[RMDB]
RNA sequence: GGGAACGACUCGAGUAGAGUCGAAAAGCAUCGGCAUCAAGCCAUCUUACGCCGGCGCCUCCAACUGCGAAGAUCAAGCCUCACCCACAUCUUCCGAACGCUCGCUUGAUUGGCAAUCACCUCCAGAACCCCGGGUGCUAUUCGUAGCACCCGGGGUAAAAGAAACAACAACAACAAC
Reactivity to 2A3 in 0.01 (KOAc 150mM, MgCl2 10mM, bicine 150mM(pH8.5), 24C), signal-to-noise 1, nucleotides 027 to 126: g000c000a060u090c050g040g000c020a050u130c110a100a030g110c000c000a080u080c050u080u050a030c040g010c000c040g040g000c020g010c020c030u030c010c000a040a280c040u090g000c020g050a020a010g020a040u040c020a000a100g000c020c000u000c000a020c010c000c010a020c000a070u000c000u080u020c000c000g020a050a070c020g000c000u050c000g030c000u020u080g150a140u130u060g080g080c000a010a010u010c000a000c000c030u030c020c050a050g030a130